[RMDB]
RNA sequence: GGGAACGACUCGAGUAGAGUCGAAAAGCGAUCGUACGCAGCGACGCAUCGUACCGAUCGCAGUACGAUCACUAGUCUAGCAUGCAUGGUAGUAGCACUCAUGAUCGAGCGUACCACUAGGAGACGACAACCACUCUCGCUUCGGCGAGAGUGGUUGAAAAGAAACAACAACAACAAC
Reactivity to DMS in 0.01 (KOAc 150mM, MgCl2 10mM, bicine 150mM(pH8.5), 24C), signal-to-noise 1, nucleotides 027 to 126: g000c000g010a000u010c010g030u000a020c000g000c230a160g000c000g010a040c070g000c140a070u000c130g030u000a110c160c030g000a130u000c030g050c040a150g020u000a000c020g000a040u000c000a040c020u010a100g010u000c040u000a140g010c100a070u000g010c120a090u000g020g020u030a060g040u020a060g000c100a100c000u020c000a080u000g020a080u000c010g000a000g000c020g040u000a060c040c000a120c130u000a160g000g000a070g000a070c070g030a110
Reactivity to 2A3 in 0.01 (KOAc 150mM, MgCl2 10mM, bicine 150mM(pH8.5), 24C), signal-to-noise 1, nucleotides 027 to 126: g040c000g000a020u000c010g010u050a010c040g060c170a060g000c050g020a030c030g060c010a130u170c060g070u030a170c000c050g050a250u010c050g000c000a010g000u050a010c000g000a040u030c000a010c000u000a040g060u000c040u030a020g080c020a000u150g050c060a090u090g200g070u100a200g000u020a030g000c040a020c010u000c020a050u120g140a120u060c030g010a000g000c000g000u000a000c010c000a010c050u090a090g150g000a020g010a030c020g000a020
Structure probing data (DMS and 2A3) for a 177-nucleotide construct. For DMS, 795 sequencing reads were counted. For 2A3, 1,089 sequencing reads were counted. For DMS the reverse transcriptase was MarathonRT. DMS (dimethyl sulfate) methylates the pairing face of unpaired adenines and cytosines. The reactions ran in a buffer of 150 mM KOAc, 10 mM MgCl2 and 150 mM bicine (pH 8.5), at 24 C.